[RMDB]
RNA sequence: GGGAACGACUCGAGUAGAGUCGAAAAUUAAAUAACGUGAAGAAGCAGAGGAAGGACUGCAAGAACACGAACCACCAAACAUCAAGAACAGCACGAAGGAGCUGAAGAAGAUGAACCACCAAAAAAACAUGUAAAAGAAGUUCGCUUCUUUUACAUGAAAAGAAACAACAACAACAAC
Reactivity to DMS in 0.01 (KOAc 150mM, MgCl2 10mM, bicine 150mM(pH8.5), 24C), signal-to-noise 3, nucleotides 027 to 126: u000u000a090a120a110u020a140a110c050g020u010g000a100a070g000a180a230g030c020a040g000a120g010g010a080a060g020g000a110c040u000g010c030a030a070g020a120a050c010a020c050g010a120a110c070c050a070c080c050a060a040a120c050a040u010c060a060a130g010a090a070c050a040g000c000a040c040g010a060a070g020g010a060g020c010u000g030a070a040g000a120a110g000a000u000g000a090a150c080c060a040c050c060a000a000a070a070a090a040a140
Reactivity to 2A3 in 0.01 (KOAc 150mM, MgCl2 10mM, bicine 150mM(pH8.5), 24C), signal-to-noise 4, nucleotides 027 to 126: u100u060a060a020a080u150a080a050c010g020u030g070a180a070g030a110a020g040c010a010g020a030g110g090a110a040g070g050a030c000u000g000c030a060a060g050a030a010c010a000c030g010a040a040c030c030a020c020c020a050a080a030c020a010u040c020a060a010g020a050a040c010a000g020c020a000c090g090a150a060g100g030a050g000c020u020g010a020a010g030a020a010g010a020u040g010a010a010c020c010a040c010c030a040a100a000a000a000a010a080